[RMDB]
RNA sequence: GGGAACGACUCGAGUAGAGUCGAAAAUAUGCUACAUUCUAUUUUACUAAUGAGCCUGCAUUUAUUAUGCAUGUUUCUUGGUACAUUAUGUUCGGGCCUAUCGUUCCCAUAUGGAUGACCUGCGUCUCCAAAGACUUAACUUCGGUUAAGUCUUUGGAAAAGAAACAACAACAACAAC
Reactivity to 2A3 in 0.01 (KOAc 150mM, MgCl2 10mM, bicine 150mM(pH8.5), 24C), signal-to-noise 2, nucleotides 027 to 126: u060a000u030g030c000u050a170c000a080u000u060c020u080a100u040u060u010u010a010c000u020a010a050u110g020a000g010c000c060u000g000c010a010u010u090u130a270u300u160a000u090g020c000a010u020g020u100u130u010c010u000u020g000g010u000a010c020a050u080u040a040u180g020u000u040c060g060g000g000c000c000u000a020u050c020g000u000u000c000c020c040a030u090a030u040g040g010a020u060g020a080c020c060u060g080c120g030u030c000u000